[RMDB]
RNA sequence: GGGAACGACUCGAGUAGAGUCGAAAAGUCUAGCGAACGGAUCCCACCCGGGAUACACGCAAGUCGCGAAUUAAGCCGACCGGCCAAGGUCAAUGGCAGAACUCAACUGCAUGAGUAAGCUAGACGAAUUAUACGGUCAGUUCGCUGACCGUAUAAUAAAAGAAACAACAACAACAAC
Reactivity to DMS in 0.01 (KOAc 150mM, MgCl2 10mM, bicine 150mM(pH8.5), 24C), signal-to-noise 4, nucleotides 027 to 126: g000u000c000u000a000g000c010g000a230a100c050g010g010a030u010c000c010c010a240c300c120c300g010g010g010a050u000a180c030a100c070g000c050a050a080g000u000c160g010c130g000a100a050u000u000a170a130g010c020c030g010a040c030c080g020g030c140c190a110a140g000g000u000c010a100a080u000g010g010c010a040g010a060a090c100u000c060a070a040c020u010g010c010a150u000g000a170g010u000a010a230g010c000u000a010g000a050c010g020a090
Reactivity to 2A3 in 0.01 (KOAc 150mM, MgCl2 10mM, bicine 150mM(pH8.5), 24C), signal-to-noise 3, nucleotides 027 to 126: g010u000c000u010a000g000c010g040a060a030c020g010g050a010u030c000c000c010a060c030c070c010g020g000g000a040u070a130c070a020c030g050c040a050a100g090u070c060g020c040g130a060a100u170u060a140a010g000c010c010g030a010c010c000g100g130c120c070a150a070g010g000u040c050a040a140u170g010g060c020a020g060a020a050c010u020c050a000a060c030u040g010c020a060u060g020a050g130u020a010a010g010c000u000a010g000a010c020g000a000
An RNA of 177 nucleotides, treated with DMS and 2A3 and read out base by base. For DMS, 2,203 sequencing reads were counted. The RNA was probed in 150 mM KOAc, 10 mM MgCl2 and 150 mM bicine (pH 8.5) at 24 C.